[RMDB]
RNA sequence: GGGAACGACUCGAGUAGAGUCGAAAAGCUAGUCGGAGACGACUAGCAACGAUCAGUUCGCUGAUCGGAACGUGCAUUCGAAUACGCUAGAAGCACGAAUAGGCGACGCAUAGCGAGCUCCAGAGGAAGCUCAUGACAUGAGACACAAGGCGUCGCGCCCUAGUCGCGGUUUCGACCGCGACUAGGGAAAAGAAACAACAACAACAAC
Reactivity to 2A3 in 0.01 (KOAc 150mM, MgCl2 10mM, bicine 150mM(pH8.5), 24C), signal-to-noise 1, nucleotides 027 to 156: g010c010u010a000g010u000c010g060g000a030g010a040c000g000a000c010u000a000g040c000a000a000c030g000a000u010c010a000g000u080u180c170g000c050u000g000a000u000c000g020g030a070a030c010g000u000g020c060a300u010u080c000g040a060a060u300a090c230g050c130u130a060g040a010a000g000c000a000c000g020a000a130u110a100g040g000c000g000a000c000g000c070a030u170a020g060c020g030a020g020c010u000c010c130a020g030a080g190g090a070a060g020c000u000c030a000u060g060a040c090a100u060g080a000g040a030c020a010c020a230a000g060g000c010g000u000c000g000c000g000
This 207-nucleotide RNA was probed chemically with 2A3. For 2A3 the reverse transcriptase was SuperScript II with manganese. Source: RMDB library OK3TST, as collected in RNAgym. Conditions: 150 mM KOAc, 10 mM MgCl2 and 150 mM bicine (pH 8.5), 24 C. The 2A3 profile rests on 672 reads.